[RMDB]
RNA sequence: GGGAACGACUCGAGUAGAGUCGAAAAGAAACCGCGACGCAGGACUGAGUCAGUCGGGAGAGAGCUGGGCGGGGCGGGCCGCGGGCGGGGCCUCCCGGGACCUCCUCCCGCAGGGGACCAGCGCACGCAUAUAUGCGCUGUUCGCAGCGCAUAUAUGAAAAGAAACAACAACAACAAC
Reactivity to DMS in 0.01 (KOAc 150mM, MgCl2 10mM, bicine 150mM(pH8.5), 24C), signal-to-noise 3, nucleotides 027 to 126: g000a140a140a140c010c030g010c070g000a080c070g020c060a080g000g010a200c090u000g010a140g020u010c070a080g030u000c010g000g000g000a070g000a130g010a060g000c080u000g000g000g010c070g000g000g010g000c160g000g000g000c060c060g010c070g030g020g030c300g010g010g000g000c030c020u000c020c020c030g000g000g010a070c120c010u000c040c010u000c000c010c000g010c050a080g010g000g000g000a110c040c020a050g010c050g030c060a060c140g010
Reactivity to 2A3 in 0.01 (KOAc 150mM, MgCl2 10mM, bicine 150mM(pH8.5), 24C), signal-to-noise 1, nucleotides 027 to 126: g070a060a090a000c040c000g000c020g050a040c030g000c060a060g070g090a140c060u060g000a050g130u090c060a030g070u170c000g000g030g010a040g000a010g000a010g000c080u130g030g070g020c090g030g050g090g120c100g010g030g050c030c030g060c050g030g050g030c120g000g020g000g030c010c000u000c000c000c040g070g000g000a080c020c030u060c010c010u030c000c020c000g000c000a010g010g020g000g000a010c000c010a020g000c040g000c010a030c060g030
The data come from the RNA Mapping Database (RMDB), library OK2TRN. An RNA of 177 nucleotides, treated with DMS and 2A3 and read out base by base. Values cover nucleotides 27 to 126. The 2A3 profile rests on 1,554 reads. The DMS profile rests on 2,828 reads. Reactivities are rounded to 0.1 and cut off at 0 and 3. For 2A3 the reverse transcriptase was SuperScript II with manganese.